This 207-nucleotide RNA was probed chemically with 2A3 and DMS. DMS adducts were read by reverse transcription with MarathonRT. The 2A3 profile rests on 2,544 reads. For DMS, 2,580 sequencing reads were counted. The reactions ran in a buffer of 150 mM KOAc, 10 mM MgCl2 and 150 mM bicine (pH 8.5), at 24 C.
RNA sequence: GGGAACGACUCGAGUAGAGUCGAAAAGGAUGCUUUCGAGCAUCCAAAAAAACCUUUGUGGAUUUGUCUUUUGACGGCACUAUAGCGUCCCAUUGGGACGAGUAAAUUGCCGAUAAGACAUGUCCACUCUGGUAAAAAACAGUGCUUCGGCACUGAACCAUGAAUAAGGGUUCGCCCUUAUUCAUGGAAAAGAAACAACAACAACAAC
Reactivity to 2A3 in 0.01 (KOAc 150mM, MgCl2 10mM, bicine 150mM(pH8.5), 24C), signal-to-noise 3, nucleotides 027 to 156: g010g000a010u020g000c030u060u110u210c240g010a010g000c000a000u010c000c010a020a000a010a020a010a000a030c000c000u000u030u010g010u000g010g000a010u010u020u000g010u000c030u050u100u030u150g190a090c010g000g000c000a010c010u090a050u140a240g080c010g000u000c000c000c070a300u240u300g010g010g000a000c000g000a000g000u010a020a210a140u120u050g000c010c000g020a030u010a040a010g000a000c000a000u010g000u010c000c000a000c000u000c000u000g000g010u070a100a130a010a000a030a020c000a000g000u000g000c000u100u130c230g130g020c020a000c000u000g000a010a040
Reactivity to DMS in 0.01 (KOAc 150mM, MgCl2 10mM, bicine 150mM(pH8.5), 24C), signal-to-noise 1, nucleotides 027 to 156: g010g030a000u010g000c000u000u000u000c300g020a080g050c010a030u000c010c000a000a000a050a050a010a040a010c020c010u010u000u000g030u010g020g010a040u000u010u000g000u000c000u000u000u000u000g000a170c030g020g020c030a030c110u000a100u010a110g010c000g010u010c000c000c010a300u020u000g080g060g000a030c000g000a100g000u000a060a050a140u010u000g010c000c000g020a150u010a010a070g010a010c000a010u000g000u000c000c000a010c000u000c020u000g000g030u000a000a050a060a090a130a080c000a020g020u000g010c000u000u010c300g080g050c000a000c010u000g030a030a170